[RMDB]
RNA sequence: GGGAACGACUCGAGUAGAGUCGAAAACAGAAGUUUUCCAACUGUGGUCCUGGACCAACACCAUCACCUGGGAAGCUUGCUAGACAGGAAGAUUCUUCAGCUUCACUCCAGACCUGCUGAAUCAGAAGAUCACACCAUGGUUCGCCAUGGUGUGAUCAAAAGAAACAACAACAACAAC
Reactivity to DMS in 0.01 (KOAc 150mM, MgCl2 10mM, bicine 150mM(pH8.5), 24C), signal-to-noise 2, nucleotides 027 to 126: c110a060g020a040a090g010u000u000u000u000c060c030a150a070c120u010g010u010g030g000u020c060c000u010g000g020a030c110c110a090a050c190a090c130c000a030u010c030a030c080c070u000g000g000g000a000a020g000c030u000u000g020c080u000a070g040a090c180a080g000g000a080a090g000a050u010u000c010u010u000c020a110g010c050u000u000c050a100c080u020c070c000a110g010a110c300c020u010g010c000u000g000a030a090u000c030a080g000a080a180
Reactivity to 2A3 in 0.01 (KOAc 150mM, MgCl2 10mM, bicine 150mM(pH8.5), 24C), signal-to-noise 1, nucleotides 027 to 126: c050a030g100a140a030g050u020u010u080u080c020c030a040a060c060u080g010u080g080g030u070c020c070u020g010g060a060c000c050a080a020c030a050c050c010a040u050c080a030c070c000u000g020g000g000a000a000g050c020u010u010g050c020u010a010g030a120c010a030g100g010a060a070g040a130u040u010c000u060u010c010a000g000c000u040u050c010a050c140u000c040c040a020g040a090c000c020u050g050c030u030g050a040a080u080c010a040g000a250a010
An RNA of 177 nucleotides, treated with DMS and 2A3 and read out base by base.
Source: RMDB library OK2TST, as collected in RNAgym.
Values cover nucleotides 27 to 126.
Conditions: 150 mM KOAc, 10 mM MgCl2 and 150 mM bicine (pH 8.5), 24 C.